[RMDB]
Structure probing data (2A3 and DMS) for a 177-nucleotide construct. High 2A3 reactivity points to a flexible backbone, as in loops and unpaired stretches. The RNA was probed in 150 mM KOAc, 10 mM MgCl2 and 150 mM bicine (pH 8.5) at 24 C. For 2A3 the reverse transcriptase was SuperScript II with manganese. Values are in units of 0.01, from 0 to 300, in steps of 10.
RNA sequence: GGGAACGACUCGAGUAGAGUCGAAAAGAAAGAAAGAAAGUGGGCAGUAUCAUUCGAACUGCACCUUUUCGUAAGAACCAUUCAAUAUUACACUGCCUGUAGCCAAUACGGACCGGGACAGAGGGAAGAUAACGGUUACGUUCGCGUAACCGUUAUCAAAAGAAACAACAACAACAAC
Reactivity to 2A3 in 0.01 (KOAc 150mM, MgCl2 10mM, bicine 150mM(pH8.5), 24C), signal-to-noise 4, nucleotides 027 to 126: g070a020a040a000g090a000a090a010g040a000a000a000g100u080g010g020g000c010a010g010u060a140u250c070a150u110u300c160g030a000a000c010u000g000c000a150c000c000u020u000u000u000c000g000u080a040a050g050a050a010c010c010a010u080u090c120a140a040u100a070u220u100a040c060a020c060u020g000c000c000u040g040u080a050g020c040c000a060a030u170a210c110g010g000a030c030c040g000g010g060a050c010a000g070a050g010g020g030a090a080
Reactivity to DMS in 0.01 (KOAc 150mM, MgCl2 10mM, bicine 150mM(pH8.5), 24C), signal-to-noise 4, nucleotides 027 to 126: g000a160a050a110g000a140a130a180g000a000a000a020g010u000g010g010g010c010a020g020u000a140u000c010a180u020u020c210g020a060a010c010u000g010c000a010c030c000u030u000u000u000c020g020u030a110a080g000a110a220c020c010a130u040u040c090a100a050u010a100u020u030a100c090a100c030u010g000c010c000u000g020u010a190g020c000c000a050a090u050a110c190g020g000a040c180c030g000g010g000a080c030a000g010a070g000g000g020a090a050